Source: RMDB library OK2TRN, as collected in RNAgym. Chemical mapping of a 177-nucleotide RNA with DMS and 2A3.
RNA sequence: GGGAACGACUCGAGUAGAGUCGAAAAAAAGUAGCCUCUCGAGAGCCUCUCUGUCUCCUCGAGGACACGGAGCCAGAAGCUCUUGUCAACAAUGCUGUCCGCGCCUACGAAAUCGCCAGUCUCGUAGGUCUAGGACAAAAUUCGUUUUGUCCUAGACAAAAGAAACAACAACAACAAC
Reactivity to DMS in 0.01 (KOAc 150mM, MgCl2 10mM, bicine 150mM(pH8.5), 24C), signal-to-noise 5, nucleotides 027 to 126: a060a040a110g010u000a070g000c070c060u000c050u000c020g020a030g000a040g000c030c030u000c170u000c010u000g010u000c030u000c000c010u000c130g000a100g010g020a070c100a080c190g000g010a020g010c040c020a060g020a070a140g000c010u000c000u000u010g010u000c080a070a070c150a030a070u000g000c040u000g000u000c020c030g000c180g000c050c010u000a020c040g000a020a030a050u000c070g010c080c120a100g010u000c050u000c030g010u010a040g010
Reactivity to 2A3 in 0.01 (KOAc 150mM, MgCl2 10mM, bicine 150mM(pH8.5), 24C), signal-to-noise 2, nucleotides 027 to 126: a000a000a010g020u030a010g020c030c040u070c010u010c070g030a030g000a000g020c000c000u000c000u000c010u010g020u010c000u010c040c010u030c070g180a150g040g070a000c020a000c070g020g000a000g000c000c010a020g000a050a000g020c010u020c000u010u020g040u020c020a020a040c010a080a140u120g000c020u040g070u040c000c000g020c020g040c000c010u030a040c030g030a040a040a030u110c060g020c050c000a010g040u000c010u010c050g030u030a030g000
For DMS, 5,150 sequencing reads were counted.